[RMDB]
RNA sequence: GGGAACGACUCGAGUAGAGUCGAAAACCAUGCAGCUUGACAACCAGUGUCGCCCAUGAUGACACUCCCAAAAGCGGGACGUGACAUUAUCGACAUGCUCCCCAAACUCAACCGGGUCGGCCUGCCUGAACUCUAAAGGGACUGCACGUAUGCCCCUCACUAGGGUACAGUUCGCUGUACCCUAGUGAAAAGAAACAACAACAACAAC
Reactivity to 2A3 in 0.01 (KOAc 150mM, MgCl2 10mM, bicine 150mM(pH8.5), 24C), signal-to-noise 2, nucleotides 027 to 156: c030c000a040u140g030c000a000g040c030u170u150g020a060c040a050a050c080c050a130g030u060g010u040c040g050c070c150c020a040u040g000a010u010g030a030c010a000c010u040c000c000c000a180a280a050a040g230c150g000g030g000a030c150g010u040g030a020c000a000u030u030a080u290c010g000a020c040a080u070g040c020u050c010c000c010c020a030a090a030c050u070c030a020a090c040c060g010g020g000u030c040g000g030c000c010u040g000c000c000u060g060a090a090c020u040c070u150a030a150a060g010g010g030a020c070u090g020c010a000c090g050u030a020u160g000c000c000c050c000u010
Overview
Structure probing data (2A3) for a 207-nucleotide construct. The reactions ran in a buffer of 150 mM KOAc, 10 mM MgCl2 and 150 mM bicine (pH 8.5), at 24 C. Source: RMDB library VIROID, as collected in RNAgym. Reactivities are given for positions 27 through 156.